This 177-nucleotide RNA was probed chemically with 2A3. It was measured as part of the RMDB library OK1LIB. The 2A3 profile rests on 1,351 reads. The reactions ran in a buffer of 150 mM KOAc, 10 mM MgCl2 and 150 mM bicine (pH 8.5), at 24 C.

RNA sequence: GGGAACGACUCGAGUAGAGUCGAAAAAGACUGAUGAUCACAGACAUGAGACCAUUGUCACUUGAGACUAUAAUAAUAUCACUAACCAGAGACAUCAUAACACACAGAUUUAUAUACUUGAUAAAUCGAGUCACAGGGUAUUCGUACCCUGUGACUCAAAAGAAACAACAACAACAAC
Reactivity to 2A3 in 0.01 (KOAc 150mM, MgCl2 10mM, bicine 150mM(pH8.5), 24C), signal-to-noise 3, nucleotides 027 to 126: a000g180a070c070u070g010a020u070g030a060u090c050a000c030a030g030a030c040a110u070g050a020g020a040c040c040a080u050u260g040u000c000a010c130u060u130g030a040g000a010c080u050a010u050a260a100u180a090a040u100a040u140c050a020c150u130a110a040c020c090a010g050a040g090a250c000a030u120c000a000u140a220a000c070a000c010a000c020a050g000a010u000u050u000a030u000a030u080a110c090u110u140g040a000u010a040a030a010u030c050